[RMDB]
RNA sequence: GGGAACGACUCGAGUAGAGUCGAAAAGUGGUGCGCGGAGAGGGUAAUCACCGGCGCGCGUCACUGAUAUAUCCACCGGGGGGUAAGGGGAGAAAAGGAUACAGCGCGACGAAGUUAGCACGCUGCCGAAAUGUACCCACAUUCGUGUGGGUACAAAUAAACAAGCGUAUUUCGAUACGCUUGUUUAAAAAGAAACAACAACAACAAC
Reactivity to 2A3 in 0.01 (KOAc 150mM, MgCl2 10mM, bicine 150mM(pH8.5), 24C), signal-to-noise 1, nucleotides 027 to 156: g000u000g000g000u010g000c030g000c010g100g100a150g000a090g100g000g090u100a090a090u170c110a010c040c000g000g100c000g000c000g000c010g000u000c010a000c000u000g000a000u040a000u030a060u180c040c000a040c130c130g080g000g000g000g050g000u030a030a010g070g030g000g000a050g040a010a100a000a040g040g000a060u080a210c000a000g030c060g000c040g100a080c000g030a120a010g060u050u130a000g040c020a030c030g020c000u050g050c030c000g060a120a130a020u040g030u000a000c000c000c000a000c000a000u070u170c180g100u070g000u010g020g000g000u000a000c000a000a000a000
Reactivity to DMS in 0.01 (KOAc 150mM, MgCl2 10mM, bicine 150mM(pH8.5), 24C), signal-to-noise 2, nucleotides 027 to 156: g030u000g040g010u000g020c020g020c000g020g020a220g000a170g010g030g030u000a120a140u000c100a100c020c000g010g010c010g000c010g010c020g020u000c010a030c020u000g000a140u000a100u000a090u000c030c030a150c010c030g030g000g030g000g030g010u010a060a060g000g000g010g030a090g010a080a090a070a100g000g020a200u000a060c030a050g040c030g030c040g020a180c050g000a140a090g030u000u000a110g030c060a060c050g000c010u000g010c030c080g000a060a050a140u010g000u010a000c000c010c000a000c000a080u000u010c290g040u010g020u010g000g010g000u000a040c000a030a060a090
Conditions: 150 mM KOAc, 10 mM MgCl2 and 150 mM bicine (pH 8.5), 24 C. Structure probing data (2A3 and DMS) for a 207-nucleotide construct. The 2A3 profile rests on 595 reads. For 2A3 the reverse transcriptase was SuperScript II with manganese. It was measured as part of the RMDB library M2RFPK.